[RMDB]
RNA sequence: GGGAACGACUCGAGUAGAGUCGAAAAUACCAAUGGUUCGCCAUUGGUACUUGUAUUGACGAAUACUACCGUAGAAGUAUUCAGGUGUCAUAACUACGGAUAUACACUAGAGUUUCGACUCUAGUAAGCGAAGAUAAGCAUUCGUGCUUAUCUUCGCAAAAGAAACAACAACAACAAC
Reactivity to 2A3 in 0.01 (KOAc 150mM, MgCl2 10mM, bicine 150mM(pH8.5), 24C), signal-to-noise 2, nucleotides 027 to 126: u030a000c000c000a000a010u010g020g010u000u010c220g030c070c000a000u000u010g010g000u000a030c020u060u130g130u100a170u100u160g030a030c040g000a010a010u010a010c010u080a300c010c000g000u000a000g010a080a000g000u010a010u030u000c020a040g120g140u280g060u050c020a100u080a260a090c010u000a010c000g000g040a020u050a010u020a200c090a000c010u010a000g000a000g010u000u020u200c260g070a040c000u000c000u000a000g000u010a060a000
Reactivity to DMS in 0.01 (KOAc 150mM, MgCl2 10mM, bicine 150mM(pH8.5), 24C), signal-to-noise 1, nucleotides 027 to 126: u000a000c000c000a040a010u000g010g000u010u020c260g080c000c000a010u000u000g010g010u000a010c060u000u000g020u000a070u000u030g000a100c070g000a060a060u000a010c010u000a130c000c020g020u000a010g020a110a010g000u000a000u000u000c020a140g000g040u010g020u010c030a080u000a120a080c020u000a000c000g000g030a300u030a060u010a130c240a030c040u000a000g000a010g000u000u000u010c170g000a000c040u000c000u020a010g000u000a050a120

This 177-nucleotide RNA was probed chemically with 2A3 and DMS. It was measured as part of the RMDB library M2PK50. The RNA was probed in 150 mM KOAc, 10 mM MgCl2 and 150 mM bicine (pH 8.5) at 24 C. 2A3 is a SHAPE reagent: it acylates the 2'-hydroxyl of flexible nucleotides of all four kinds.